[RMDB]
RNA sequence: GGGAACGACUCGAGUAGAGUCGAAAAGGCUGGUACAUCCGUAUUUGUACCAAAAUCUGUACCAAAUUAUCCAAAUUCACUUAUGUUUGAUUAUUAAUACAUUGAUUUUCAAAGCAUAAUUACUGAACCAAGUACGUAUGUUCGCAUACGUACUUGGAAAAGAAACAACAACAACAAC
Reactivity to DMS in 0.01 (KOAc 150mM, MgCl2 10mM, bicine 150mM(pH8.5), 24C), signal-to-noise 1, nucleotides 027 to 126: g000g010c160u000g000g000u000a000c000a000u000c160c240g030u000a050u000u000u000g000u000a010c000c030a070a040a100a090u010c040u000g010u000a180c040c020a090a120a090u010u000a070u000c130c090a070a040a120u000u010c080a030c200u000u000a000u000g000u010u000u000g000a010u000u000a010u000u000a040a190u040a150c180a140u000u030g010a000u000u000u030u000c010a020a010a040g000c000a000u000a020a000u000u010a050c150u000g000a120a160
Reactivity to 2A3 in 0.01 (KOAc 150mM, MgCl2 10mM, bicine 150mM(pH8.5), 24C), signal-to-noise 1, nucleotides 027 to 126: g010g040c030u020g000g010u020a010c000a020u090c060c010g050u060a170u040u140u110g000u020a030c010c000a030a030a030a030u070c050u110g000u010a040c000c020a030a080a090u220u070a030u030c000c020a000a090a160u190u130c040a000c090u020u050a020u030g010u000u030u000g000a000u000u020a000u000u060a070a030u120a240c090a140u000u100g000a020u000u010u000u020c010a030a040a000g050c000a000u000a050a010u120u060a090c000u050g030a030a050
Structure probing data (DMS and 2A3) for a 177-nucleotide construct.
It was measured as part of the RMDB library RFMREP.
The RNA was probed in 150 mM KOAc, 10 mM MgCl2 and 150 mM bicine (pH 8.5) at 24 C.
Values cover nucleotides 27 to 126.